[RMDB]
RNA sequence: GGGAACGACUCGAGUAGAGUCGAAAAGUGGUACAUUGAUGCUGUAGGCCAGGCAUGGAAGGCAGUUCUAGAUGAUGGGUGCAUGCGAAUCUGUCUCUUCAAGAAGAAUCAGCAUGGUGGCCUCAGAUACUAGCCGCUAUUUCGAUAGCGGCUAGUAAAAAGAAACAACAACAACAAC
Reactivity to DMS in 0.01 (KOAc 150mM, MgCl2 10mM, bicine 150mM(pH8.5), 24C), signal-to-noise 2, nucleotides 027 to 126: g020u000g000g020u000a010c110a090u020u000g020a070u010g020c040u010g020u010a050g020g010c020c000a070g000g010c050a040u000g000g010a070a050g010g020c100a070g010u010u000c060u010a120g020a050u000g010a060u000g010g000g050u000g040c050a070u000g000c120g070a070a080u010c010u000g010u000c020u000c080u000u000c130a030a080g010a050a070g000a100a070u010c090a050g040c020a020u010g000g060u000g010g010c010c000u010c050a030g010a190
Reactivity to 2A3 in 0.01 (KOAc 150mM, MgCl2 10mM, bicine 150mM(pH8.5), 24C), signal-to-noise 2, nucleotides 027 to 126: g040u030g110g000u080a120c040a080u050u120g110a090u180g020c050u040g060u190a030g000g090c020c010a000g080g130c040a000u060g100g000a040a000g080g000c060a010g020u080u060c000u060a100g030a210u110g010a010u060g070g040g100u100g100c000a030u120g030c030g200a060a040u060c020u030g070u020c030u010c000u170u000c040a080a030g020a000a000g040a000a120u070c020a000g000c020a000u040g000g010u030g000g030c000c000u000c000a020g000a010

About this RNA:
An RNA of 177 nucleotides, treated with DMS and 2A3 and read out base by base. For 2A3 the reverse transcriptase was SuperScript II with manganese. Conditions: 150 mM KOAc, 10 mM MgCl2 and 150 mM bicine (pH 8.5), 24 C.